This 207-nucleotide RNA was probed chemically with 2A3 and DMS. 2A3 is a SHAPE reagent: it acylates the 2'-hydroxyl of flexible nucleotides of all four kinds. High DMS reactivity at an A or C suggests that its Watson-Crick edge is free. 2A3 adducts were read by reverse transcription with SuperScript II with manganese. The DMS profile rests on 2,980 reads. It was measured as part of the RMDB library ARCHII.
[RMDB]
RNA sequence: GGGAACGACUCGAGUAGAGUCGAAAAACUGCAAAAAAUACAAACACUUACGCAUUAGCAGCUUAAUAACCUGCCUGCGUGACCAGUCGCGAAUUGCUUGUGUUUGCUGAUUGGUCUUAAAAUAGCAAGCUACGUUGGGAUUGAGUCAGGCAGUUCCGUUAUAGAGAAUCUUCGGAUUCUCUAUAACAAAAGAAACAACAACAACAAC
Reactivity to 2A3 in 0.01 (KOAc 150mM, MgCl2 10mM, bicine 150mM(pH8.5), 24C), signal-to-noise 3, nucleotides 027 to 156: a000c060u090g030c070a100a010a010a060a100a000u240a120c110a040a200a000c060a040c110u150u090a000c010g000c010a030u100u100a030g010c000a000g000c000u010u020a030a010u020a020a060c010c000u000g000c000c010u010g000c010g000u000g000a000c000c000a000g010u000c000g010c010g000a030a050u060u150g050c040u090u060g020u040g000u030u010u010g010c010u060g000a060u040u010g010g000u010c000u020u080a050a070a010a010u110a020g040c080a120a000g020c000u010a000c020g000u020u000g000g040g040a110u040u040g020a030g050u020c010a010g020g010c000a020g030u080u020c030c070
Reactivity to DMS in 0.01 (KOAc 150mM, MgCl2 10mM, bicine 150mM(pH8.5), 24C), signal-to-noise 1, nucleotides 027 to 156: a100c080u000g060c050a000a020a120a090a070a120u010a040c030a140a090a100c070a100c060u010u000a020c040g000c020a100u000u000a060g000c030a030g030c020u010u000a150a130u020a100a070c230c000u000g030c000c050u000g000c030g070u000g020a030c010c000a050g030u000c020g030c000g000a040a040u000u000g030c140u020u010g000u000g030u000u000u010g030c040u030g030a070u000u010g000g010u000c020u000u000a020a040a040a100u000a120g010c030a060a160g020c020u000a020c040g040u010u000g000g000g000a120u000u000g000a110g000u000c010a030g000g000c000a060g030u000u000c060c080